[RMDB]
RNA sequence: GGGAACGACUCGAGUAGAGUCGAAAAGCGCCUCGGUUCGCCGAGGCGCAAACAAACACGAAUAGCGGAAAAACGUGAAAACCGCAAAAAGAAACAAAGAAAAAACCGUAUGCUUCGGCAUACGGAACAUGUAUAAGGUGUUCGCACCUUAUACAUGAAAAGAAACAACAACAACAAC
Reactivity to 2A3 in 0.01 (KOAc 150mM, MgCl2 10mM, bicine 150mM(pH8.5), 24C), signal-to-noise 2, nucleotides 027 to 126: g000c040g070c000c080u020c010g060g000u060u080c160g060c070c020g000a010g030g030c010g010c000a000a010a000c010a000a010a000c010a000c020g030a080a120u100a240g000c020g000g080a240a250a080a120a100c030g090u110g110a120a120a050a040c000c060g000c040a010a120a020a020a000g090a030a070a000c070a030a100a070g160a090a120a020a030a010a020c000c000g010u000a000u000g010c000u040u050c180g140g000c000a000u000a000c000g020g000a000a000
Reactivity to DMS in 0.01 (KOAc 150mM, MgCl2 10mM, bicine 150mM(pH8.5), 24C), signal-to-noise 2, nucleotides 027 to 126: g010c020g030c000c000u020c010g020g020u010u020c250g010c010c000g000a010g010g050c000g000c020a000a050a050c070a090a110a190c100a100c080g000a070a060u000a120g010c010g020g000a090a060a060a080a100c080g030u010g000a070a060a060a230c000c000g040c030a000a030a060a070a030g010a060a050a060c090a060a080a130g010a020a080a050a110a100a150c000c000g010u000a000u000g000c000u010u000c190g010g010c000a010u000a000c000g000g000a010a040